[RMDB]
RNA sequence: GGGAACGACUCGAGUAGAGUCGAAAAGAGGGCAUCGAUGGUCCGGCAGUUAAAGCCCUUCUAUCACAUCGACACCGAGGGAGAAGUCAUCAGGACGCUGGAGGGGAAAGUGCCCAACCUCGCGUGGCACACCUCUACCUUUCGAGGUAGAGGUGUGAAAAGAAACAACAACAACAAC
Reactivity to DMS in 0.01 (KOAc 150mM, MgCl2 10mM, bicine 150mM(pH8.5), 24C), signal-to-noise 3, nucleotides 027 to 126: g010a140g020g000g020c050a120u000c080g000a090u010g000g010u010c020c030g010g020c050a130g000u020u010a040a120a150g000c010c020c030u000u010c030u000a100u000c130a080c100a060u010c030g010a140c090a050c050c040g000a040g000g000g010a100g010a110a080g020u000c070a100u020c100a100g000g000a050c040g010c090u010g000g020a120g000g010g020g000a090a090a110g020u000g000c010c010c010a040a140c030c010u000c040g000c120g030u010g000g000
Reactivity to 2A3 in 0.01 (KOAc 150mM, MgCl2 10mM, bicine 150mM(pH8.5), 24C), signal-to-noise 2, nucleotides 027 to 126: g100a050g000g000g000c000a050u040c080g140a050u070g010g060u000c000c000g030g070c010a070g010u080u090a070a080a010g000c000c000c000u060u000c050u070a110u080c060a030c030a110u040c030g070a030c020a010c050c020g010a030g010g020g000a150g040a120a030g060u020c020a090u050c070a100g160g030a030c060g000c050u070g060g050a070g020g010g000g050a020a300a030g110u110g070c000c000c000a010a050c000c010u010c020g020c080g020u090g050g000